[RMDB]
Source: RMDB libraries RFM100 and RFMREP, as collected in RNAgym. The record gives the reactivity of an RNA of 177 nucleotides to DMS and 2A3. The RNA was probed in 150 mM KOAc, 10 mM MgCl2 and 150 mM bicine (pH 8.5) at 24 C. Reactivities are given for positions 27 through 126.
RNA sequence: GGGAACGACUCGAGUAGAGUCGAAAACACGACAAAGGCAAAUCCGUCGAAAGACGGAGACGCGCAGCCCUUGACGCGUCGGCGUUGCGCUGAUGCGUCUGGUACUCUAGAUACUGCAUAUCUGCUCAACGUCAGUAUUCUUCGGAAUACUGACGUUAAAAGAAACAACAACAACAAC
Reactivity to DMS in 0.01 (KOAc 150mM, MgCl2 10mM, bicine 150mM(pH8.5), 24C), signal-to-noise 4, nucleotides 027 to 126: c080a080c120g010a100c150a070a120a060g020g010c020a070a170a170u000c000c000g010u000c000g000a090a100a150g010a010c000g000g000a000g000a110c180g000c010g000c080a100g020c210c040c080u030u020g000a020c000g010c000g010u000c020g010g020c000g010u010u010g010c080g040c010u000g000a020u000g000c020g000u000c000u020g010g010u000a040c100u010c080u000a060g010a110u010a090c090u010g000c040a120u010a080u010c010u000g000c080u000c110
Reactivity to 2A3 in 0.01 (KOAc 150mM, MgCl2 10mM, bicine 150mM(pH8.5), 24C), signal-to-noise 8, nucleotides 027 to 126: c060a010c020g140a030c070a050a110a030g130g000c020a030a030a090u000c000c000g000u000c010g040a090a030a010g000a000c000g000g000a000g000a000c020g010c010g000c020a040g000c010c000c000u020u110g000a010c010g010c000g010u000c000g000g000c040g130u300u300g120c130g000c070u010g000a000u000g000c010g000u000c000u010g000g020u070a060c030u020c020u080a050g030a120u070a110c010u060g020c010a040u040a050u120c020u040g010c020u030c050